[RMDB]
RNA sequence: GGGAACGACUCGAGUAGAGUCGAAAACAGAAUGGCGGUAGUGUGGGAGAUACUCGGAAUGUUUUAAAUGGAUGGUUGAAUGGUGCGUACCGCCCGAUGAAGAGACAAGCCGGCCGAGAAAACGAGAGAGAGAUACGUGGUUCGCCACGUAUCUCUCAAAAGAAACAACAACAACAAC
Reactivity to 2A3 in 0.01 (KOAc 150mM, MgCl2 10mM, bicine 150mM(pH8.5), 24C), signal-to-noise 1, nucleotides 027 to 126: c040a050g150a230a010u070g010g030c030g010g010u030a000g070u120g000u060g140g030g000a030g000a030u070a070c030u060c000g020g080a080a020u090g050u030u050u080u090a110a130a090u200g060g030a020u040g040g010u080u090g040a100a110u190g060g030u030g000c030g020u000a030c000c040g000c000c000c000g000a010u010g090a000a000g000a000g000a100c030a030a000g020c000c000g030g000c000c000g060a060g000a030a100a000a000c200g000a040g000a000
Reactivity to DMS in 0.01 (KOAc 150mM, MgCl2 10mM, bicine 150mM(pH8.5), 24C), signal-to-noise 2, nucleotides 027 to 126: c130a090g010a030a070u010g000g000c070g000g000u000a020g000u050g010u010g000g000g000a080g020a160u000a030c050u000c020g020g010a070a040u020g010u000u020u000u000a030a070a100u020g000g000a040u020g000g000u000u000g030a120a110u000g000g040u070g040c000g000u000a050c050c030g000c020c020c010g000a130u060g000a090a060g020a050g000a070c130a060a070g050c030c050g050g000c040c000g020a100g000a060a130a040a040c090g000a100g020a110
An RNA of 177 nucleotides, treated with 2A3 and DMS and read out base by base. For DMS, 2,447 sequencing reads were counted. Values cover nucleotides 27 to 126. The data come from the RNA Mapping Database (RMDB), library OK1LIB. Conditions: 150 mM KOAc, 10 mM MgCl2 and 150 mM bicine (pH 8.5), 24 C.